Structure probing data (DMS and 2A3) for a 177-nucleotide construct. The reactions ran in a buffer of 150 mM KOAc, 10 mM MgCl2 and 150 mM bicine (pH 8.5), at 24 C. DMS adducts were read by reverse transcription with MarathonRT. Source: RMDB library VIROID, as collected in RNAgym.
RNA sequence: GGGAACGACUCGAGUAGAGUCGAAAAGCUCUCCUGAUGAGCCCAUGGCAGGGCAAAACCAGUUCGGUACGGUAUGGCAAGGCUUGCCUCGGAGCUAUGCGGGAGGGCUCCCGGGGCGCCGCACGGGGUAUAUUAAUUGGUUCGCCAAUUAAUAUACAAAAGAAACAACAACAACAAC
Reactivity to DMS in 0.01 (KOAc 150mM, MgCl2 10mM, bicine 150mM(pH8.5), 24C), signal-to-noise 5, nucleotides 027 to 126: g010c010u000c010u010c000c010u010g000a060u010g010a140g000c010c010c010a090u010g000g020c020a040g010g000g020c010a020a040a160a100c000c010a040g000u010u010c050g010g010u010a080c140g010g010u000a080u000g000g000c040a090a300g010g000c010u000u000g010c000c010u000c100g010g000a070g010c000u000a060u010g010c040g000g000g010a010g000g000g000c000u000c010c010c010g030g010g000g010c050g010c040c030g010c090a050c090g010g010g010
Reactivity to 2A3 in 0.01 (KOAc 150mM, MgCl2 10mM, bicine 150mM(pH8.5), 24C), signal-to-noise 5, nucleotides 027 to 126: g000c000u000c000u010c010c010u060g050a160u060g080a040g000c020c000c010a030u050g050g000c020a030g020g020g020c010a040a040a010a010c040c000a050g100u160u140c030g130g140u190a100c070g040g050u110a080u060g020g020c050a060a070g060g030c020u020u040g000c020c000u030c110g010g000a150g020c010u040a070u240g080c030g000g010g000a010g000g010g010c000u010c000c000c010g000g000g000g000c020g000c020c020g020c010a020c040g060g010g030